[RMDB]
RNA sequence: GGGAACGACUCGAGUAGAGUCGAAAAUUCACGCUGGAUGGGCCAUGCUGGAAGCACUUUUCCUUUCGCAUGUGUUUCCUCGAUACCGCUUCUGCUUUUAUGGAUAUGUUCUAUGGCUUUGCUGGUAGAUAAAAUGCAGCUUCGGCUGCAUUUUAUCAAAAGAAACAACAACAACAAC
Reactivity to 2A3 in 0.01 (KOAc 150mM, MgCl2 10mM, bicine 150mM(pH8.5), 24C), signal-to-noise 1, nucleotides 027 to 126: u040u030c030a000c060g030c060u040g050g000a080u040g030g000g140c010c010a060u090g000c010u080g030g040a020a030g070c150a040c050u160u070u090u180c000c000u000u060u060c070g090c030a020u040g050u030g000u010u100u030c000c000u020c010g070a080u040a030c010c010g080c060u060u070c040u060g030c000u060u090u070u130a050u070g040g030a030u050a070u230g080u060u070c040u040a050u020g040g000c090u060u040u050g010c050u060g000g000u040a030
Reactivity to DMS in 0.01 (KOAc 150mM, MgCl2 10mM, bicine 150mM(pH8.5), 24C), signal-to-noise 2, nucleotides 027 to 126: u000u010c030a110c110g010c050u000g010g020a070u000g010g010g010c010c030a050u000g010c040u010g040g000a020a030g010c150a080c200u000u000u000u000c090c020u000u000u010c070g030c100a040u010g000u020g010u010u010u000c010c000u030c090g000a170u000a030c090c030g000c030u000u000c030u000g010c070u000u010u020u010a080u010g010g010a060u000a080u000g010u000u000c020u000a060u000g010g010c030u000u000u010g010c020u010g010g010u000a090